This 177-nucleotide RNA was probed chemically with 2A3 and DMS. The RNA was probed in 150 mM KOAc, 10 mM MgCl2 and 150 mM bicine (pH 8.5) at 24 C. The DMS profile rests on 62,984 reads. Reactivities are given for positions 27 through 126. For 2A3, 52,030 sequencing reads were counted. The data come from the RNA Mapping Database (RMDB), library OK1LIB.

RNA sequence: GGGAACGACUCGAGUAGAGUCGAAAACACAGUGAGAAACUCUGGGCGAGAAGCACGUACCAGCAGAGUCACCCUGUGGUAGAGGCUGCUCACUAUAUAACCGUGUAAGGGAGGUAGACUUACGUGGACAAUGAUACAUUUUCGAAUGUAUCAUUGUAAAAGAAACAACAACAACAAC
Reactivity to 2A3 in 0.01 (KOAc 150mM, MgCl2 10mM, bicine 150mM(pH8.5), 24C), signal-to-noise 9, nucleotides 027 to 126: c040a000c010a000g030u030g040a070g040a050a070a010c010u000c010u010g000g030g000c020g010a080g030a130a020g070c040a020c050g010u030a170c000c000a010g020c030a010g020a010g040u020c010a030c010c000c010u030g000u010g010g020u030a030g010a020g040g000c020u030g000c000u020c010a030c020u010a010u010a020u020a150a050c010c010g000u000g010u020a020a020g020g040g020a090g040g070u060a020g020a020c000u010u010a010c010g020u030g010g010
Reactivity to DMS in 0.01 (KOAc 150mM, MgCl2 10mM, bicine 150mM(pH8.5), 24C), signal-to-noise 9, nucleotides 027 to 126: c060a010c120a030g010u010g010a050g000a110a100a060c020u000c010u010g010g000g000c030g000a110g000a130a100g000c120a090c060g000u010a070c020c010a100g010c110a020g000a080g010u010c050a090c060c030c020u010g010u000g000g010u010a030g000a090g000g000c060u010g010c010u000c020a060c040u010a080u020a070u030a080a150c020c020g020u000g010u010a030a040g000g010g000a060g000g000u020a060g000a080c020u010u000a020c030g010u010g000g000